[RMDB]
RNA sequence: GGGAACGACUCGAGUAGAGUCGAAAAUGAAGCUGCAGCAUGUCAUCUUGCUAAAGCCUUACAAACAUACAGCGAGACUGGUAGUGAUCUUCUUUACCAACCACCCAACUGUAGCAUAACCUCUGGCGAUGAUUGAGAACUUCGGUUCUCAAUCAUCAAAAGAAACAACAACAACAAC
Reactivity to DMS in 0.01 (KOAc 150mM, MgCl2 10mM, bicine 150mM(pH8.5), 24C), signal-to-noise 1, nucleotides 027 to 126: u000g000a140a090g020c030u010g020c300a030g000c070a060u020g020u010c170a140u000c010u000u000g020c060u000a020a230a080g000c010c090u000u000a080c150a060a070a080c080a260u010a080c150a030g090c020g020a000g000a050c210u000g000g000u070a020g000u000g000a010u000c160u000u010c050u000u000u000a050c030c030a000a170c080c080a060c000c000c000a010a120c030u000g010u000a030g020c010a090u000a130a120c140c080u000c020u000g000g000c270
Reactivity to 2A3 in 0.01 (KOAc 150mM, MgCl2 10mM, bicine 150mM(pH8.5), 24C), signal-to-noise 1, nucleotides 027 to 126: u090g060a080a020g010c010u020g000c010a020g020c020a040u090g060u110c040a130u040c080u100u040g000c000u030a140a020a040g010c000c000u060u070a050c090a010a070a000c040a050u080a030c050a020g000c000g020a030g030a100c090u000g050g000u020a020g000u020g060a090u030c060u160u030c000u040u230u020a020c010c020a030a030c020c040a040c000c000c020a050a000c030u060g010u060a020g030c030a020u020a070a060c010c030u050c000u030g000g030c010
Structure probing data (DMS and 2A3) for a 177-nucleotide construct. 2A3 adducts were read by reverse transcription with SuperScript II with manganese. The reactions ran in a buffer of 150 mM KOAc, 10 mM MgCl2 and 150 mM bicine (pH 8.5), at 24 C. For DMS, 513 sequencing reads were counted. Values cover nucleotides 27 to 126. It was measured as part of the RMDB library 15KREP.